The record gives the reactivity of an RNA of 177 nucleotides to DMS and 2A3. In probing experiments dimethyl sulfate is read out at A N1 and C N3, which are open when not base-paired. 2A3 adducts were read by reverse transcription with SuperScript II with manganese. Reactivities are given for positions 27 through 126.
[RMDB]
RNA sequence: GGGAACGACUCGAGUAGAGUCGAAAAUUCCAGGAGGUGAUGGAGAGCGAGGAGUUUCUGCUGCUCCCCGUCGGCCAGCUGGUGGACAUCAUUUGCAGCGACGAGCUAAACGUGCGCUCCGAGGAGCCCAGGAUGAAUUGUUCGCAAUUCAUCCUGGAAAAGAAACAACAACAACAAC
Reactivity to DMS in 0.01 (KOAc 150mM, MgCl2 10mM, bicine 150mM(pH8.5), 24C), signal-to-noise 3, nucleotides 027 to 126: u010u030c000c000a130g010g000a220g000g010u000g000a020u000g000g000a040g000a040g020c010g000a160g010g010a140g010u010u010u020c040u000g010c100u020g010c000u010c000c000c000c020g030u000c030g020g020c010c030a120g010c040u000g020g030u010g000g010a100c120a070u010c070a100u010u000u000g010c150a030g010c030g000a100c090g010a120g000c040u000a040a100a110c100g020u000g010c110g010c010u000c060c040g000a080g010g000a120g010c080
Reactivity to 2A3 in 0.01 (KOAc 150mM, MgCl2 10mM, bicine 150mM(pH8.5), 24C), signal-to-noise 2, nucleotides 027 to 126: u100u030c020c020a030g060g090a040g070g040u070g010a050u060g010g020a050g000a020g030c020g080a030g040g000a070g060u060u130u060c090u090g120c050u070g000c000u000c000c000c010c000g050u030c010g010g070c020c010a050g050c040u070g000g050u040g060g010a030c000a110u090c020a060u070u040u190g000c060a030g020c020g100a050c050g020a030g030c020u130a130a130a000c040g040u130g070c030g000c030u000c020c040g060a160g080g010a020g020c030